Chemical mapping of a 170-nucleotide RNA with 2A3 and DMS. For DMS, 15,387 sequencing reads were counted. Conditions: 150 mM KOAc, 10 mM MgCl2 and 150 mM bicine (pH 8.5), 24 C. 2A3 adducts were read by reverse transcription with SuperScript II with manganese.
RNA sequence: GGGAACGACUCGAGUAGAGUCGAAAAUGUUCCCACUCUUAUUUGUGACUAUGGCCUUCGUUAUGUUGUUGGUUAAACACAAACACACCUUUUUGACACUUUUCUUGUUGCCUGUGGCUAUUUGUUUUAAAGCGAGUAUUCGUACUCGCUAAAAGAAACAACAACAACAAC
Reactivity to 2A3 in 0.01 (KOAc 150mM, MgCl2 10mM, bicine 150mM(pH8.5), 24C), signal-to-noise 5, nucleotides 027 to 129: u130g000u000u050c000c020c000a030c020u090c020u160u230a180u100u060u080g060u030g030a030c100u120a070u100g030g010c000c010u040u060c090g100u130u080a110u300g140u110u050g000u020u000g030g000u000u070a100a150a010c040a020c000a050a100a000c110a040c000a050c040c000u100u070u050u070u200g000a000c000a000c030u000u000u070u050c010u040u040g080u060u040g030c010c010u090g020u030g060g020c010u020a150u140u020u030g010u000u040u010u100a150a070
Reactivity to DMS in 0.01 (KOAc 150mM, MgCl2 10mM, bicine 150mM(pH8.5), 24C), signal-to-noise 4, nucleotides 027 to 129: u100g020u000u010c000c000c000a090c140u030c070u000u000a110u050u060u020g010u030g020a090c080u040a080u010g020g030c000c020u030u010c110g040u020u030a100u030g050u060u020g000u010u020g020g040u060u010a020a030a010c130a100c150a030a040a020c080a140c110a100c000c050u000u000u000u000u000g010a150c120a070c030u020u010u020u020c030u060u000g000u030u010g000c040c070u010g060u000g010g060c090u030a060u020u010u040g020u000u000u000u000a070a170